Background: An RNA of 207 nucleotides, treated with 2A3 and DMS and read out base by base. Conditions: 150 mM KOAc, 10 mM MgCl2 and 150 mM bicine (pH 8.5), 24 C. For 2A3, 1,725 sequencing reads were counted. DMS adducts were read by reverse transcription with MarathonRT.
[RMDB]
RNA sequence: GGGAACGACUCGAGUAGAGUCGAAAAGUCCCCAGUAUGACGUUAAACUGCUGACUCAUACACACUGACACCGGUUGCUCAACAGGCUGUGUGGGACAAUAGAAUAACAAGGCUGUCAAUUUGAGCUAAAACUCCUCGGGGUUCGCCCCGAGGAGAAGUAAUAACUACGCUUCGGCGUAGUUAUUACAAAAGAAACAACAACAACAAC
Reactivity to 2A3 in 0.01 (KOAc 150mM, MgCl2 10mM, bicine 150mM(pH8.5), 24C), signal-to-noise 3, nucleotides 027 to 156: g030u010c010c000c020c000a000g000u030a030u090g010a020c060g010u020u050a050a070a010c040u060g010c010u020g010a050c020u020c070a040u070a090c030a000c000a030c050u050g080a050c010a070c110c000g050g010u070u100g040c030u020c060a040a070c020a050g080g030c020u020g020u010g020u020g070g030g020a020c020a030a060u090a090g120a100a040u090a130a030c060a060a040g100g000c060u040g090u120c040a050a070u080u040u100g020a020g000c030u040a000a020a110a110c000u020c000c000u020c000g020g010g010g000u050u040c130g060c000c010c000c000g000a010g000g000a000g000a010a000
Reactivity to DMS in 0.01 (KOAc 150mM, MgCl2 10mM, bicine 150mM(pH8.5), 24C), signal-to-noise 1, nucleotides 027 to 156: g000u000c000c010c000c040a090g040u000a010u010g010a020c020g030u000u000a030a080a100c000u010g010c030u020g000a260c010u040c040a050u010a100c020a020c080a090c050u010g000a200c070a000c030c040g050g060u000u000g030c010u000c050a060a090c030a070g010g040c040u010g040u000g070u000g030g000g000a100c080a100a090u000a140g000a130a110u000a080a090c020a090a170g030g010c020u000g020u000c030a070a140u000u000u000g000a050g000c040u000a030a070a060a140c040u000c030c000u000c000g030g010g000g010u000u000c280g010c050c010c000c000g010a000g010g000a000g000a000a040